An RNA of 207 nucleotides, treated with 2A3 and read out base by base. The data come from the RNA Mapping Database (RMDB), library M2RFPK. The RNA was probed in 150 mM KOAc, 10 mM MgCl2 and 150 mM bicine (pH 8.5) at 24 C.

RNA sequence: GGGAACGACUCGAGUAGAGUCGAAAACAUAGCGUUUCACAAUGUGCUCCAUUAACAUUGUUUAUGCAAGCACGUUUCGCAAUGUACGGCGCAGAAACAUUGCCAACACAAAUACGCUUCACGAUGUAAAACAUCGGUGCGUUCGCGCACCGAUGAAUCUACAGUAGCCCUUCGGGGCUACUGUAGAAAAAGAAACAACAACAACAAC
Reactivity to 2A3 in 0.01 (KOAc 150mM, MgCl2 10mM, bicine 150mM(pH8.5), 24C), signal-to-noise 1, nucleotides 027 to 156: c010a050u050a020g020c020g010u020u060u150c100a080c060a080a030u080g000u000g000c030u000c030c000a010u050u090a000a000c010a150u140u300g020u090u060u010a020u050g000c000a010a010g020c010a000c050g070u000u090u100c060g000c010a020a020u120g040u080a050c050g040g070c090g010c030a020g150a040a080a000c000a020u000u070g050c070c050a190a000c020a000c000a040a240a000u140a070c010g000c030u120u170c220a120c170g020a030u080g000u220a000a050a120a050c000a000u000c000g000g000u000g000c000g030u000u050c140g000c000g020c050a000c000c070g000a000u000g000a000a000